[RMDB]
An RNA of 207 nucleotides, treated with DMS and 2A3 and read out base by base. For 2A3 the reverse transcriptase was SuperScript II with manganese. It was measured as part of the RMDB library OK3TST. Values cover nucleotides 27 to 156. The DMS profile rests on 2,463 reads. The reactions ran in a buffer of 150 mM KOAc, 10 mM MgCl2 and 150 mM bicine (pH 8.5), at 24 C.
RNA sequence: GGGAACGACUCGAGUAGAGUCGAAAAACUGUGUUAGGGUAGGAGGUUGACGCGGUAGCGGGUUUCGUGGGGUUAAAGUACAUAGUCAAGAUACUUUGUGGGGAAUACUUCACUGCCUGAGCUAAAUGAGUCCUAGCGGGAUUGCUAAUUGACAUUGAUACUUUGGAUCUUUCGAGAUCCAAAGUAUAAAAGAAACAACAACAACAAC
Reactivity to DMS in 0.01 (KOAc 150mM, MgCl2 10mM, bicine 150mM(pH8.5), 24C), signal-to-noise 1, nucleotides 027 to 156: a060c030u000g040u000g000u020u000a110g040g030g000u000a040g010g000a070g000g040u000u000g020a050c060g010c040g020g030u010a090g050c020g000g000g020u010u000u000c060g030u000g010g010g000g020u010u000a030a020a070g030u000a040c020a140u000a100g000u020c090a100a190g000a170u000a030c000u000u000u000g010u000g040g000g000g000a110a120u000a020c090u000u010c020a060c020u010g070c030c010u000g000a110g040c040u030a000a050a060u030g010a150g010u000c030c030u000a100g000c030g030g000g010a110u010u000g000c030u000a060a150u000u010g020a080c070a230u000u010g000
Reactivity to 2A3 in 0.01 (KOAc 150mM, MgCl2 10mM, bicine 150mM(pH8.5), 24C), signal-to-noise 2, nucleotides 027 to 156: a000c130u070g020u030g010u130u060a080g020g010g000u060a020g020g020a020g070g010u010u080g040a040c020g020c050g040g000u030a070g000c030g020g070g030u040u140u150c090g020u100g000g010g040g020u010u120a020a080a040g040u040a030c050a080u080a020g040u030c000a000a080g020a080u030a040c050u080u070u160g070u120g020g010g010g010a000a050u080a130c010u030u050c020a010c060u040g000c000c000u070g040a060g030c030u080a120a130a010u050g030a030g030u060c000c000u000a000g000c020g000g020g030a050u040u130g020c010u020a090a130u040u060g050a030c040a110u060u090g050